RNA sequence: GGGAACGACUCGAGUAGAGUCGAAAAUUGUAGGUUGAUGGUAACCCCCUUUCCUUGCUGGUUGAUAAUCUGGAACAAACUUCUACUUAAACCUUGAAGCUUUGUGUAUAGGAUCAAGGGUCUGGGAUAUAUGGUAAGUGUUCGCACUUACCAUAUAAAAAGAAACAACAACAACAAC
Reactivity to 2A3 in 0.01 (KOAc 150mM, MgCl2 10mM, bicine 150mM(pH8.5), 24C), signal-to-noise 2, nucleotides 027 to 126: u100u050g080u050a080g010g000u030u100g060a180u140g040g030u110a030a050c000c000c010c010c050u010u060u040c000c010u020u030g000c020u120g070g160u060u010g010a020u060a170a120u070c000u010g030g020a010a010c000a000a010a010c020u020u030c010u020a080c010u060u200a010a060a070c010c020u030u020g000a020a010g050c040u020u050u020g020u020g000u000a030u030a130g010g010a020u010c000a010a050g040g000g020u000c040u010g010g020g000a020
Reactivity to DMS in 0.01 (KOAc 150mM, MgCl2 10mM, bicine 150mM(pH8.5), 24C), signal-to-noise 9, nucleotides 027 to 126: u010u010g010u010a090g020g010u000u000g010a100u010g020g010u010a080a070c030c010c010c010c020u000u000u000c010c010u000u000g020c030u000g000g000u000u000g000a070u000a060a060u010c010u000g010g010a180a040c030a010a030a050c030u000u000c010u010a060c110u000u000a080a100a140c250c190u000u000g000a020a030g010c220u000u000u000g010u000g000u010a210u010a050g010g000a050u000c050a020a060g010g010g010u010c060u000g010g000g000a150